RNA sequence: GGGAACGACUCGAGUAGAGUCGAAAAAUCUUGUUCAAUACAGAUUCCACCAGGAUUGUAGCUAAGUCACAGACAGCCUAUGCAGUGUCCAGAUAUCCACAUGCUGAGGUGAACUUCAUCUUCAAGGUAUUUAUCUAUGCAUACCAGCAUCCAUGGAGCUUUUAAUGCUAUUCGUAGCAUUAAAAGCAAAAGAAACAACAACAACAAC
Reactivity to 2A3 in 0.01 (KOAc 150mM, MgCl2 10mM, bicine 150mM(pH8.5), 24C), signal-to-noise 5, nucleotides 027 to 156: a000u040c040u060u130g030u080u120c090a070a070u110a170c020a030g040a070u070u000c010c010a040c020c000a020g020g020a070u070u080g040u070a030g020c030u070a090a060g040u080c040a050c020a150g060a050c020a020g050c000c010u070a040u090g000c010a020g020u020g020u100c030c000a020g020a080u060a050u070c040c010a020c010a100u060g020c010u030g040a020g060g000u040g020a070a080c030u130u060c030a050u010c000u130u040c050a090a050g000g030u050a080u030u110u040a090u080c070u060a070u130g040c000a010u010a110c010c010a010g010c000a030u000c020c010a050u040g070g020a020
Reactivity to DMS in 0.01 (KOAc 150mM, MgCl2 10mM, bicine 150mM(pH8.5), 24C), signal-to-noise 3, nucleotides 027 to 156: a070u000c030u010u030g030u020u000c100a090a160u010a180c060a100g000a150u000u010c020c020a120c070c010a140g000g000a090u000u010g020u010a060g050c030u000a060a090g000u000c020a120c080a130g010a040c030a120g020c020c050u000a120u010g020c080a080g000u020g020u000c030c030a170g000a130u010a040u020c020c020a050c050a080u000g020c060u000g000a050g020g030u000g000a020a140c070u000u010c040a070u000c020u010u000c010a060a240g010g020u030a030u000u010u000a130u030c070u000a060u000g020c080a080u000a060c040c010a050g010c010a050u000c020c030a150u010g000g030a270